This 207-nucleotide RNA was probed chemically with DMS and 2A3. The reactions ran in a buffer of 150 mM KOAc, 10 mM MgCl2 and 150 mM bicine (pH 8.5), at 24 C. 2A3 adducts were read by reverse transcription with SuperScript II with manganese.
RNA sequence: GGGAACGACUCGAGUAGAGUCGAAAAGGUUUUAGAGAAUACAUUUUUUGCCGAGUCGCAGAAGGAAUCAGUACUUUCCUUUAGGAAGAUUAGUCUGGUAAUUACGUGUAUUGGCCUAGUUAGUAAAUGUUUUUUGUGGGCAUGAAUCAAUUGAAUAAUCGGUAGCAUUAUUCGUAAUGCUACCGAUAAAAGAAACAACAACAACAAC
Reactivity to DMS in 0.01 (KOAc 150mM, MgCl2 10mM, bicine 150mM(pH8.5), 24C), signal-to-noise 2, nucleotides 027 to 156: g010g030u010u000u000u000a070g020a160g000a120a080u000a060c020a030u000u000u000u000u010u010g010c040c000g010a070g010u000c040g040c040a220g000a050a020g020g000a050a040u000c040a230g030u000a070c100u020u000u000c000c000u010u010u010a110g040g040a110a110g020a110u000u030a100g000u000c050u000g060g040u000a030a060u010u010a050c140g030u000g000u010a010u000u000g030g020c010c020u000a120g000u010u010a060g020u010a050a070a100u000g000u000u020u020u000u010u000g000u010g000g040g070c040a040u000g000a060a100u010c050a050a220u010u000g000a040a100u010a100
Reactivity to 2A3 in 0.01 (KOAc 150mM, MgCl2 10mM, bicine 150mM(pH8.5), 24C), signal-to-noise 2, nucleotides 027 to 156: g070g000u040u080u110u160a060g050a000g030a090a020u190a010c010a030u070u070u070u050u090u090g000c010c000g020a020g010u030c020g000c110a070g030a100a010g030g000a010a020u080c050a080g100u090a080c050u020u090u020c000c000u060u050u050a050g030g040a030a070g000a040u030u040a030g090u010c050u050g040g010u080a070a080u090u010a030c030g010u030g000u030a050u000u060g000g010c000c010u000a030g040u050u050a010g020u060a050a140a140u060g090u000u000u010u050u100u080g050u030g030g000g010c030a020u000g020a000a020u030c030a020a050u090u270g040a060a030u300a030